[RMDB]
RNA sequence: GGGAACGACUCGAGUAGAGUCGAAAAGGUCAGGCCUGGUCGGAAACAGCAGCAGGUGAGUCCGCCUUAUGUGAAGGAUCGGCUGAAACACGAGGAAAUACUGAGCCAACGCAAGACGGUAGCCGAAAAAAUCUAGUUCACUUCGGUGAACUAGAAACGAUGUCGAAAUGUUCGCAUUUCGACAUCGAAAAGAAACAACAACAACAAC
Reactivity to 2A3 in 0.01 (KOAc 150mM, MgCl2 10mM, bicine 150mM(pH8.5), 24C), signal-to-noise 3, nucleotides 027 to 156: g050g000u040c020a010g000g050c020c010u050g040g000u060c040g030g050a130a060a030c030a050g060c010a010g000c020a020g000g050u050g050a060g040u010c030c050g040c000c010u090u100a120u120g080u020g070a070a020g060g040a070u110c050g040g000c010u020g040a060a080a000c070a020c070g020a060g000g110a060a020a040u150a160c060u070g020a020g040c000c010a060a040c060g010c030a040a020g060a060c020g070g010u040a020g000c000c000g060a110a000a020a000a000a010u000c000u000a000g000u000u000c000a000c000u020u020c120g050g000u000g000a000a000c000u000a000g000a000a000a000
Reactivity to DMS in 0.01 (KOAc 150mM, MgCl2 10mM, bicine 150mM(pH8.5), 24C), signal-to-noise 2, nucleotides 027 to 156: g040g040u000c020a070g000g000c020c030u000g030g000u010c020g030g000a140a090a100c090a100g030c070a050g010c060a110g040g020u000g000a170g020u000c020c040g010c010c000u010u010a080u000g040u010g010a100a060g010g010a100u030c040g000g020c000u000g040a230a090a100c020a090c040g030a040g020g030a110a050a160u010a050c030u010g030a080g000c030c010a020a110c050g040c060a100a090g010a050c040g030g050u000a060g040c040c030g040a000a030a080a090a050a100u000c010u000a020g010u000u000c000a030c000u000u010c300g000g020u000g010a010a010c000u000a030g010a000a020a130